[RMDB]
RNA sequence: GGGAACGACUCGAGUAGAGUCGAAAAGCAUGAGCCCCGAUCAGGUCGAGGCAUUCCUGAACCGGAACAUGUAAGGGAGCUACCCCAUGACCGCAAGCAAAACCACCAUGCGUUACGGUGAUCCGAAUGCACGGUUACGAUUCGUCGUAACCGUGCAAAAAGAAACAACAACAACAAC
Reactivity to DMS in 0.01 (KOAc 150mM, MgCl2 10mM, bicine 150mM(pH8.5), 24C), signal-to-noise 2, nucleotides 027 to 126: g000c080a050u010g010a070g060c120c050c130c060g020a050u010c090a010g010g010u030c140g020a150g010g030c040a200u000u010c010c020u000g000a070a160c080c080g000g010a020a120c030a030u000g040u010a050a090g000g000g010a120g000c100u000a060c040c050c000c060a080u000g040a040c080c010g020c140a050a020g000c040a070a060a060a170c090c020a080c030c030a100u000g020c040g000u000u000a050c060g000g010u000g000a090u030c010c000g000a110a060
Source: RMDB library OK2TRN, as collected in RNAgym.
Chemical mapping of a 177-nucleotide RNA with DMS.
Values cover nucleotides 27 to 126.
For DMS, 1,114 sequencing reads were counted.
The RNA was probed in 150 mM KOAc, 10 mM MgCl2 and 150 mM bicine (pH 8.5) at 24 C.